[RMDB]
RNA sequence: GGGAACGACUCGAGUAGAGUCGAAAACUCACCCACGGCAACAAAUUCCAAUUGUGUGUAACAUUCAAUGCAAUUGAGCCGACGCCGUGGGAAAUCACUUUCGUGGAACCAUUUGAUCCCACGCUCGAUAUGAAGUUCGUUUCGACGAACUUCAUAUAAAAGAAACAACAACAACAAC
Reactivity to DMS in 0.01 (KOAc 150mM, MgCl2 10mM, bicine 150mM(pH8.5), 24C), signal-to-noise 4, nucleotides 027 to 126: c040u010c050a280c000c000c010a020c010g000g000c010a120a170c100a070a090a110u050u030c070c030a020a010u000u000g020u020g030u000g010u040a100a140c220a130u060u030c070a130a030u020g000c020a000a020u010u000g000a060g000c140c160g020a160c220g010c000c010g010u000g000g030g000a010a030a060u020c130a100c120u000u000u000c020g010u020g000g000a030a060c030c050a080u030u020u050g000a090u020c020c000c000a030c010g010c200u000c140g010
Reactivity to 2A3 in 0.01 (KOAc 150mM, MgCl2 10mM, bicine 150mM(pH8.5), 24C), signal-to-noise 6, nucleotides 027 to 126: c000u010c030a030c020c000c000a000c000g010g000c010a050a030c010a070a300a130u160u030c040c000a010a000u000u010g000u000g000u010g050u060a170a090c070a140u080u120c090a190a090u080g000c000a000a000u010u000g030a040g070c070c040g040a050c100g000c000c000g000u010g000g000g000a040a010a000u050c010a020c040u140u140u100c010g040u010g040g030a090a060c000c020a140u100u110u210g050a050u060c020c020c000a000c020g060c030u090c040g050
Source: RMDB libraries RFM100 and RFMREP, as collected in RNAgym. The record gives the reactivity of an RNA of 177 nucleotides to DMS and 2A3.